[RMDB]
RNA sequence: GGGAACGACUCGAGUAGAGUCGAAAAUUGUCACGAAUGCGUGGGCCUUCUAACUCUUUGAUGAUGCCAAAGUUGACGUUCAUUGGUUGGAAAUGCUUACUGUCGGCAUGAGUCACAUAAUGAGGCAAGGUGACGUAGGAUUCGUCCUACGUCACCUAAAAGAAACAACAACAACAAC
Reactivity to 2A3 in 0.01 (KOAc 150mM, MgCl2 10mM, bicine 150mM(pH8.5), 24C), signal-to-noise 3, nucleotides 027 to 126: u090u090g070u110c000a000c050g040a070a130u160g040c020g100u060g010g000g030c000c000u010u010c040u000a050a030c000u050c090u200u030u050g050a070u100g000a050u090g050c000c000a030a090a080g060u090u060g090a010c030g010u000u060c010a010u060u120g100g030u050u030g040g010a150a110a070u120g050c010u000u050a120c020u060g090u160c040g060g030c010a000u030g020a010g030u020c000a010c030a060u200a100a060u190g050a020g070g070c120a110
Reactivity to DMS in 0.01 (KOAc 150mM, MgCl2 10mM, bicine 150mM(pH8.5), 24C), signal-to-noise 2, nucleotides 027 to 126: u010u000g010u000c070a020c030g010a130a040u050g010c110g000u000g000g010g030c000c070u010u000c060u040a080a020c040u030c080u010u000u020g000a070u010g000a050u000g000c040c030a000a070a080g030u010u000g000a070c090g000u000u020c020a100u000u010g010g050u020u010g000g000a000a030a040u000g010c050u050u000a070c040u000g030u040c120g010g000c020a000u020g000a140g000u000c130a020c160a050u040a060a060u000g030a060g000g000c070a120